Chemical mapping of a 177-nucleotide RNA with 2A3 and DMS. Conditions: 150 mM KOAc, 10 mM MgCl2 and 150 mM bicine (pH 8.5), 24 C. The DMS profile rests on 856 reads.

RNA sequence: GGGAACGACUCGAGUAGAGUCGAAAAUGAGGAUGCCUCGCGUCUGAUGCGUUAUCCGGCAGGCAAUAUUACCGGCUGGCGUUUGUGGCUGGAUGAGCCGCUGAAAGUCGACUCAUUAAGUCAGCAAGUGCCUCGAUUUAUUCGUAAAUCGAGGCACAAAAGAAACAACAACAACAAC
Reactivity to 2A3 in 0.01 (KOAc 150mM, MgCl2 10mM, bicine 150mM(pH8.5), 24C), signal-to-noise 1, nucleotides 027 to 126: u090g040a070g040g010a040u080g030c020c060u080c040g010c020g030u140c110u140g040a100u140g010c060g040u020u050a020u070c040c000g000g000c050a060g040g060c040a000a150u160a070u200u090a020c000c000g060g000c030u030g000g080c040g040u060u160u040g080u080g000g000c010u020g020g030a020u020g010a010g000c030c010g040c010u020g150a060a000a000g130u150c000g020a010c010u010c010a000u010u040a000a000g010u030c010a020g060c020a100a040
Reactivity to DMS in 0.01 (KOAc 150mM, MgCl2 10mM, bicine 150mM(pH8.5), 24C), signal-to-noise 1, nucleotides 027 to 126: u000g040a180g000g030a130u000g010c030c060u010c110g000c150g010u000c050u000g000a120u000g010c030g040u000u000a090u010c090c010g030g030c060a050g000g000c110a110a060u030a070u000u000a090c010c000g020g050c020u000g000g000c050g000u000u000u000g010u000g010g020c000u010g010g000a010u010g010a030g010c010c010g030c020u020g050a070a090a110g040u010c020g010a000c000u000c010a090u000u010a080a040g030u000c040a120g000c120a050a050
Overview: 2A3 adducts were read by reverse transcription with SuperScript II with manganese. Values cover nucleotides 27 to 126. The 2A3 profile rests on 880 reads.